[RMDB]
RNA sequence: GGGAACGACUCGAGUAGAGUCGAAAAUAACCUACUUUUGUCGGCAAUUGCUGGAUGCACCCUACAAUUGCGUGAAUGGGUGUAACUAAAAUAUGAUAUUAAUCUAAAUAACUGAAGAUUCAAGUGCCGGGUGGAUACGAUUCGUCGUAUCCACCCGAAAAGAAACAACAACAACAAC
Reactivity to 2A3 in 0.01 (KOAc 150mM, MgCl2 10mM, bicine 150mM(pH8.5), 24C), signal-to-noise 1, nucleotides 027 to 126: u090a000a020c000c000u060a180c220u300u090u000u160g090u000c000g000g000c090a130a090u160u100g030c000u090g060g030a020u050g000c000a000c000c000c000u000a020c000a300a200u020u170g060c070g000u060g110a110a090u160g000g000g000u020g000u000a060a010c000u060a000a000a100a050u140a130u140g010a060u030a020u200u270a270a140u000c050u090a000a050a080u220a070a170c110u060g030a020a000g030a200u000u010c090a030a000g000u000g000c040
Source information:
An RNA of 177 nucleotides, treated with 2A3 and read out base by base. Values cover nucleotides 27 to 126. For 2A3 the reverse transcriptase was SuperScript II with manganese.